Annotation: Source: RMDB library OK2TST, as collected in RNAgym. An RNA of 177 nucleotides, treated with 2A3 and DMS and read out base by base. For DMS the reverse transcriptase was MarathonRT. The reactions ran in a buffer of 150 mM KOAc, 10 mM MgCl2 and 150 mM bicine (pH 8.5), at 24 C.

RNA sequence: GGGAACGACUCGAGUAGAGUCGAAAAUCUCUUGUACACUGUCUUACGUAACAAGGGAGGAACGGGAAUGAUGGAAAAACUGGUUCGGGACAUUGUGUUCCUUCAUAUGUACCACGCUGGGAAGAAACACUAUCCGUCGGUUCGCCGACGGAUAGUGAAAAGAAACAACAACAACAAC
Reactivity to 2A3 in 0.01 (KOAc 150mM, MgCl2 10mM, bicine 150mM(pH8.5), 24C), signal-to-noise 1, nucleotides 027 to 126: u090c000u000c000u000u080g030u090a030c080a060c130u160g060u220c080u260u070a080c080g020u020a130a040c010a060a000g040g020g000a000g010g050a050a030c040g010g000g090a070a040u150g090a020u100g060g000a110a110a030a070a100c010u020g050g070u060u070c000g020g060g030a010c010a040u150u090g070u050g020u180u070c000c000u000u000c070a050u130a060u180g010u030a050c000c050a030c110g050c060u060g000g000g050a010a040g040a050a030a020
Reactivity to DMS in 0.01 (KOAc 150mM, MgCl2 10mM, bicine 150mM(pH8.5), 24C), signal-to-noise 2, nucleotides 027 to 126: u000c010u000c000u000u010g000u020a030c110a130c060u000g020u000c120u050u000a100c110g010u020a080a040c030a040a030g000g000g020a020g000g020a090a130c090g000g010g000a060a030u010g020a070u000g000g000a110a050a050a090a120c100u000g000g000u000u030c140g000g000g000a040c050a070u000u010g030u000g020u000u000c030c000u000u000c060a080u020a060u000g000u000a090c030c000a030c130g000c080u000g010g000g000a070a070g000a120a070a110